RNA sequence: GGGAACGACUCGAGUAGAGUCGAAAAGCAGACCCAUGCCGUCCGGUUUGGCACCGGCUUUCCAGGCCAUAUUAAUCCCGUCGCCGUCUUUACCGACGUUGCCAACCAUAAUGGUGUCGGGGAAGGCUCGUCCAACCCCUUUCGAGGGGUUGGACGAAAAAGAAACAACAACAACAAC
Reactivity to 2A3 in 0.01 (KOAc 150mM, MgCl2 10mM, bicine 150mM(pH8.5), 24C), signal-to-noise 1, nucleotides 027 to 126: g130c090a010g030a150c000c000c000a040u150g000c010c030g010u110c000c040g070g000u000u000u000g000g000c010a010c010c010g000g070c060u040u080u040c000c000a050g000g020c030c000a010u020a060u150u130a160a100u090c000c010c040g200u130c030g000c000c040g010u000c000u000u060u000a030c000c030g000a010c000g030u050u050g000c010c000a040a010c010c010a110u160a200a150u230g000g010u160g010u020c000g000g000g030g000a010a010g040g000c000